RNA sequence: GGGAACGACUCGAGUAGAGUCGAAAAUACGAUGCAUCGUAAUCGAUAUGCGCCGGCGCGCCGUAGCUACGGCGCGCUACGUAGCCGUAUAGCCGGCAUUAUACGCGGCUAGCGCUAGCGCUAGCCGCCUUCAGUAGGGGUUCGCCCCUACUGAAGGAAAAGAAACAACAACAACAAC
Reactivity to 2A3 in 0.01 (KOAc 150mM, MgCl2 10mM, bicine 150mM(pH8.5), 24C), signal-to-noise 1, nucleotides 027 to 126: u160a020c030g040a030u080g090c030a140u030c020g080u160a070a090u090c020g050a020u040a050u210g010c040g040c070c100g010g000c000g000c000g000c010c000g080u090a090g080c140u150a020c000g000g000c000g000c010g020c010u000a010c000g020u030a000g000c050c000g030u060a060u080a300g100c090c010g040g000c030a000u170u150a030u010a080c060g010c000g000g000c000u010a000g030c020g070c130u150a090g160c030g000c000u000a000g000c000c000g030

The record gives the reactivity of an RNA of 177 nucleotides to 2A3.